[RMDB]
RNA sequence: GGGAACGACUCGAGUAGAGUCGAAAAAGGUGUAGCAGAAGUAACAUGGUUCAGAGCAUUGACAGCAAGGCCACUUAUAAGCUGUAUGGUCUUUGGCAAAUAACCUGUUGUACUUCAGCUCCCUCAUGUGUAAAAUGGGGGCAAUAAUUGCACCUACCACCUGUAUCAAGUUCGCUUGAUACAGGUGAAAAGAAACAACAACAACAAC
Reactivity to 2A3 in 0.01 (KOAc 150mM, MgCl2 10mM, bicine 150mM(pH8.5), 24C), signal-to-noise 7, nucleotides 027 to 156: a000g020g010u010g020u020a010g010c060a030g010a010a000g000u020a010a010c020a040u260g010g020u050u070c110a050g020a020g100c010a030u020u070g030a020c010a020g050c030a090a060g030g000c040c040a090c070u230u190a150u080a300a050g020c050u060g100u150a040u040g010g010u000c000u020u020u040g120g000c030a050a090a090u100a000a040c010c000u020g040u070u050g090u050a000c000u000u000c020a000g000c010u040c000c000c000u010c000a040u090g130u050g120u230a040a020a090a050u020g000g000g000g000g020c030a010a020u150a140a060u100u070g000c000a000c000c000u010a010c010
Reactivity to DMS in 0.01 (KOAc 150mM, MgCl2 10mM, bicine 150mM(pH8.5), 24C), signal-to-noise 4, nucleotides 027 to 156: a040g010g020u000g010u000a040g020c030a130g030a020a050g010u010a040a080c030a070u010g020g010u010u000c050a080g010a300g040c010a090u000u000g000a090c020a050g020c030a150a300g000g010c010c020a120c150u000u010a180u000a090a080g020c060u000g000u000a140u010g010g010u000c010u010u000u000g020g040c040a030a090a150u000a050a020c000c010u010g000u010u010g010u000a040c030u000u000c000a150g000c010u000c010c010c010u010c030a020u010g010u000g020u000a090a050a090a040u000g000g000g010g010g040c070a010a070u000a070a120u010u000g010c010a030c010c020u000a150c130

An RNA of 207 nucleotides, treated with 2A3 and DMS and read out base by base. The data come from the RNA Mapping Database (RMDB), library OK3TST. The DMS profile rests on 8,524 reads. The RNA was probed in 150 mM KOAc, 10 mM MgCl2 and 150 mM bicine (pH 8.5) at 24 C. Reactivities are rounded to 0.1 and cut off at 0 and 3.